[RMDB]
RNA sequence: GGGAACGACUCGAGUAGAGUCGAAAAGAACUCGCUGUCCAGCAGAGUGAUAGGACAUGAAUACAUACUUCUAGCAAAGGCUGAGUAGCAUUAGGCAGGUGGCCAGAUGAGGUCAGAGCUCUGGCCCUAGUGCCCUGUAGUAAGUUGCGAGGGAGUAAUCAAAAUCCGUAUUCGUACGGAUUUUGAUAAAAGAAACAACAACAACAAC
Reactivity to DMS in 0.01 (KOAc 150mM, MgCl2 10mM, bicine 150mM(pH8.5), 24C), signal-to-noise 2, nucleotides 027 to 156: g000a040a100c030u000c040g020c040u000g020u000c050c050a160g040c000a090g010a080g000u000g010a130u000a090g000g030a080c030a060u000g000a130a220u000a130c070a180u000a090c030u000u000c020u010a090g000c050a080a080a150g010g030c000u020g030a030g030u010a060g040c070a140u010u000a060g030g000c070a090g000g000u000g030g000c000c040a110g000a080u000g010a140g020g030u000c130a070g010a180g030c110u000c020u000g000g000c020c000c000u000a070g020u000g030c000c010c000u000g000u000a030g020u000a130a210g000u000u000g000c000g000a090g020g040g020a120g010u020a070
Reactivity to 2A3 in 0.01 (KOAc 150mM, MgCl2 10mM, bicine 150mM(pH8.5), 24C), signal-to-noise 3, nucleotides 027 to 156: g050a040a040c030u030c080g050c050u040g000u060c030c030a060g070c060a040g110a040g090u120g020a090u100a130g010g020a010c020a060u120g110a120a040u200a100c040a010u060a030c030u040u020c060u050a010g010c030a080a040a050g140g000c010u020g030a010g080u110a010g000c040a030u050u060a030g030g020c060a030g010g110u120g150g000c020c000a000g030a130u110g020a040g020g100u100c050a040g030a040g040c030u000c000u080g000g000c020c000c000u050a040g040u020g040c000c010c000u030g010u040a030g000u010a040a210g020u040u030g010c030g010a090g030g000g040a020g050u060a080
This 207-nucleotide RNA was probed chemically with DMS and 2A3. 2A3 adducts were read by reverse transcription with SuperScript II with manganese. It was measured as part of the RMDB library OK3TST. The DMS profile rests on 2,517 reads. The 2A3 profile rests on 1,906 reads. DMS adducts were read by reverse transcription with MarathonRT.